[RMDB]
RNA sequence: GGGAACGACUCGAGUAGAGUCGAAAAGAUGGUUGCCUGGAAGUCCACGUUGUCGAACAGCGCGUCGAUCUCAAUCGUCGCCUGUGCCGCGGACGACAGCGUGCGCUUGGCGCGCUCGCAGGCGGUACUGCGCACGCCUAUUCGUAGGCGUGCGCAGAAAAGAAACAACAACAACAAC
Reactivity to 2A3 in 0.01 (KOAc 150mM, MgCl2 10mM, bicine 150mM(pH8.5), 24C), signal-to-noise 2, nucleotides 027 to 126: g110a080u170g100g000u170u160g000c000c000u030g000g020a070a000g030u090c020c000a010c020g030u000u060g100u100c050g140a070a060c000a000g000c040g000c000g150u000c020g000a030u020c100u060c260a260a010u000c000g000u000c000g000c000c030u000g000u000g020c080c020g010c110g020g020a020c000g000a000c010a000g000c010g020u010g000c080g000c050u060u230g110g000c000g000c000g020c030u000c010g170c020a030g000g030c000g030g040u090a090
Reactivity to DMS in 0.01 (KOAc 150mM, MgCl2 10mM, bicine 150mM(pH8.5), 24C), signal-to-noise 2, nucleotides 027 to 126: g000a120u030g010g080u020u020g000c060c010u050g000g030a080a090g000u070c080c000a040c060g000u020u000g000u000c020g020a100a030c010a000g000c190g040c000g000u000c020g050a010u000c300u040c300a150a070u010c020g000u000c000g000c000c040u000g000u000g010c140c090g040c050g000g000a150c010g060a030c140a040g010c050g020u000g000c120g000c100u000u050g000g000c080g010c010g040c040u000c030g000c030a080g000g000c020g020g000u010a040